This 207-nucleotide RNA was probed chemically with 2A3. 2A3 adducts were read by reverse transcription with SuperScript II with manganese.
RNA sequence: GGGAACGACUCGAGUAGAGUCGAAAAGCUGAGUUAUGAUGGUUUGAUGCAUCAUACUCUGAGUAGUGAUCCUCAGACACUCAGCACAGACAGUAUGUCUCUAUGGAUCACUACAUAGAGGGUUGUGCAUCAAACCACAAGCACAUACUGUAGCUGAUCAUCCUCCCACUUUCGAGUGGGAGGAUGAAAAAGAAACAACAACAACAAC
Reactivity to 2A3 in 0.01 (KOAc 150mM, MgCl2 10mM, bicine 150mM(pH8.5), 24C), signal-to-noise 2, nucleotides 027 to 156: g000c020u050g020a000g030u200u020a100u080g120a170u020g010g000u000u000u000g000a000u000g000c000a020u020c040a070u170a140c020u020c010u020g050a030g000u000a000g000u000g000a020u000c000c000u020c040a010g000a030c020a010c050u080c030a050g060c120a030c020a050g150a030c000a000g110u110a040u070g010u030c010u000c040u120a090u130g000g030a000u000c000a000c000u000a000c010a010u140a000g130a020g010g020g050u060u070g000u000g000c000a000u000c000a010a000a000c000c000a000c000a000a020g060c060a010c020a030u070a060c010u130g120u210a010g000c020u030g050a070